RNA sequence: GGGAACGACUCGAGUAGAGUCGAAAAUCUUGCUUGACGUGUUCGCGUUUCAUCGCGGUCAAUGGAUAGUCGAGCGUGAUGGAUAUUAGCCGAACGACGGCUUCGUCGAUUUCUGCAAUAAAAUGACGCGAAUAUCGCAAUGAACUUCUCAAGUGAGCAUAUACGAGCGCUUCGGCGCUCGUAUAUGAAAAGAAACAACAACAACAAC
Reactivity to 2A3 in 0.01 (KOAc 150mM, MgCl2 10mM, bicine 150mM(pH8.5), 24C), signal-to-noise 2, nucleotides 027 to 156: u000c000u030u030g010c000u030u030g000a000c000g000u010g000u000u000c000g000c000g000u030u050u040c000a000u020c000g040c010g070g050u010c040a060a070u120g090g110a140u150a290g130u140c130g000a010g130c000g000u010g000a000u000g020g000a000u000a020u070u030a050g000c060c040g000a000a000c010g020a000c000g050g190c090u260u240c010g030u000c000g020a070u030u020u030c000u010g000c000a000a000u030a050a100a080a040u160g040a020c000g000c000g010a000a000u020a030u050c000g040c070a070a150u180g030a040a090c030u110u070c000u020c020a010a010g000u070g000a000g020